RNA sequence: GGGAACGACUCGAGUAGAGUCGAAAAGCCACAAUGUGGCCUCCGAAUGCGGUUGCUUCAUGCUAGUGAAGAGCGUGGCGGUCAUCAAGCAUAACAUGGUGUGCGGCAACAGCGAGGACAAGGCCUCGCAGAUGCUGACCUGCUCGGAUGGCAACUGGUACAUAUGGAACUUCGGUUCCAUAUGUACAAAAGAAACAACAACAACAAC
Reactivity to 2A3 in 0.01 (KOAc 150mM, MgCl2 10mM, bicine 150mM(pH8.5), 24C), signal-to-noise 3, nucleotides 027 to 156: g000c010c010a030c050a050a250u300g020u010g040g010c010c010u010c010c020g070a130a060u180g040c050g010g030u060u040g020c030u030u000c030a060u060g040c040u090a090g090u070g170a100a080g030a030g050c020g020u020g040g010c060g010g020u080c010a020u010c030a050a040g010c000a040u070a140a080c030a100u150g090g000u080g070u060g060c010g050g000c010a040a050c020a090g010c000g020a000g000g000a040c080a180a080g090g110c000c000u010c000g020c010a040g020a050u040g000c010u010g040a110c000c010u020g000c020u030c020g060g020a080u130g010g000c000a020a010c020u070g030
Reactivity to DMS in 0.01 (KOAc 150mM, MgCl2 10mM, bicine 150mM(pH8.5), 24C), signal-to-noise 1, nucleotides 027 to 156: g010c000c000a040c020a060a050u000g050u020g000g030c010c000u000c000c040g030a150a250u000g040c050g010g000u010u010g000c000u000u180c060a150u010g000c030u070a120g010u000g000a170a160g000a040g010c060g040u010g000g030c050g040g070u030c020a030u000c010a090a090g040c020a120u010a030a150c060a090u000g040g010u020g020u010g020c040g000g010c010a040a130c040a240g040c010g020a000g040g030a120c010a110a130g010g010c030c030u000c020g010c020a060g000a110u010g010c040u010g000a040c000c010u000g000c020u000c010g000g000a140u000g000g000c000a020a090c060u000g010